[RMDB]
RNA sequence: GGGAACGACUCGAGUAGAGUCGAAAAACCUAUGGAUUCGUCCAUAGGUGCUGGCGCGCGGCCUAUGUCCUGUCGCGUGUGCGUGGUGGGCGAUAUACGCGCAAUAGUGACAAUUCGUUGUCACUAACAUUGUCCCAUAGUUCGCUAUGGGACAAUGAAAAGAAACAACAACAACAAC
Reactivity to DMS in 0.01 (KOAc 150mM, MgCl2 10mM, bicine 150mM(pH8.5), 24C), signal-to-noise 7, nucleotides 027 to 126: a020c000c000u000a010u000g010g010a030u000u010c210g020u000c000c000a010u000a010g000g010u000g020c140u000g000g010c050g010c010g030c030g000g010c050c090u000a080u010g010u010c020c020u000g010u000c000g020c010g030u010g030u000g020c030g040u000g010g010u000g010g000g010c040g010a100u000a070u000a100c030g010c020g010c050a120a140u000a010g010u000g000a020c000a010a040u000u020c200g010u000u000g000u000c000a000c000u000a030a140
Reactivity to 2A3 in 0.01 (KOAc 150mM, MgCl2 10mM, bicine 150mM(pH8.5), 24C), signal-to-noise 5, nucleotides 027 to 126: a000c000c000u000a000u000g010g010a010u030u130c190g050u010c070c000a000u000a000g000g000u020g040c100u070g050g070c020g000c000g000c010g040g070c000c010u110a130u180g080u080c000c000u030g030u060c010g000c040g040u160g120u160g130c030g020u030g000g060u040g020g010g000c020g020a020u030a010u020a180c020g000c000g010c040a030a070u100a030g010u010g010a010c000a010a020u040u060c210g110u080u000g000u000c000a000c000u010a030a030

Chemical mapping of a 177-nucleotide RNA with DMS and 2A3. 2A3 adducts were read by reverse transcription with SuperScript II with manganese. The DMS profile rests on 15,494 reads. Reactivities are rounded to 0.1 and cut off at 0 and 3. For DMS the reverse transcriptase was MarathonRT.